RNA sequence: GGGAACGACUCGAGUAGAGUCGAAAAUCUAUCACCAGCCCAUGUUUACGACACGAAUGGGCUGUUGCAAAUUACGUAUAGCUCUUGCAACAUGGUGUCGAAACGUUCCCAAGCUAUACGCCACAAAGGCCACUUAUUUAUUCGUAAAUAAGUGGCCAAAAGAAACAACAACAACAAC
Reactivity to DMS in 0.01 (KOAc 150mM, MgCl2 10mM, bicine 150mM(pH8.5), 24C), signal-to-noise 2, nucleotides 027 to 126: u010c000u000a150u000c030a020c000c000a260g020c020c000c010a030u020g010u010u020u000a070c100g020a100c150a080c190g030a210a040u000g000g000g030c000u000g010u030u000g010c030a050a080a190u000u000a020c010g000u000a010u000a000g000c000u000c170u000u000g020c030a030a020c030a060u030g030g000u000g010u000c180g000a040a040a090c090g000u000u000c000c010c020a190a030g000c020u000a000u000a020c030g010c130c200a070c290a080a070a070

This 177-nucleotide RNA was probed chemically with DMS.